[RMDB]
RNA sequence: GGGAACGACUCGAGUAGAGUCGAAAAGAUAGUCUGACUUUGCUUUUGAACAACAGACAUUGCAAGUCAAAAUUGUUGUCAAAUUUACAUAUGGUAAAUGAUGAACUUUAAAAAUGUGUCCAGGUGUUAGAUGAGUUCAUUAGACUCUUUUAAUGCACCUACCUGGACGAUUCGUCGUCCAGGUAGGAAAAGAAACAACAACAACAAC
Reactivity to 2A3 in 0.01 (KOAc 150mM, MgCl2 10mM, bicine 150mM(pH8.5), 24C), signal-to-noise 1, nucleotides 027 to 156: g030a080u180a060g070u000c120u070g000a040c030u120u140u120g000c050u070u030u020u240g120a100a010c050a060a040c040a040g030a080c040a040u090u090g020c010a060a060g000u010c000a210a000a000a090u100u030g000u000u000g000u000c000a000a090a220u130u110u040a030c040a030u210a160u220g070g000u040a030a150a000u040g010a040u090g000a050a030c000u090u110u060a130a100a040a050a050u040g100u030g030u060c000c070a080g020g090u050g030u040u110a090g030a170u030g020a020g030u110u090c090a030u150u230a040g030a010c020u000c000u010u090u000u000a050a030u150g030c000a000